The data come from the RNA Mapping Database (RMDB), library TTRINS. An RNA of 177 nucleotides, treated with DMS and read out base by base.
[RMDB]
RNA sequence: GGGAACGACUCGAGUAGAGUCGAAAAGAUAUGGAAGUUCGAGUAUAGAUGCGAGUUCGAUAAGUCGGUAUCGGAAACGAUACACGACUUUUGACGAACGACCAUCUAUACUCGAACUUCCUAAGUCGACUUAUAAUGUCUUCGGACAUUAUAAGUCAAAAGAAACAACAACAACAAC
Reactivity to DMS in 0.01 (KOAc 150mM, MgCl2 10mM, bicine 150mM(pH8.5), 24C), signal-to-noise 5, nucleotides 027 to 126: g010a100u020a300u010g000g000a010a010g020u010u000c000g010a010g000u000a010u000a000g000a010u000g010c020g000a300g010u000u000c000g010a180u000a010a010g020u000c000g020g000u000a010u010c000g000g000a130a110a170c010g000a000u000a000c010a150c010g010a030c000u000u010u010u000g000a260c200g000a010a000c010g010a300c300c000a000u000c000u000a000u000a000c000u000c000g000a000a000c000u000u000c000c000u000a010a080g010u010c090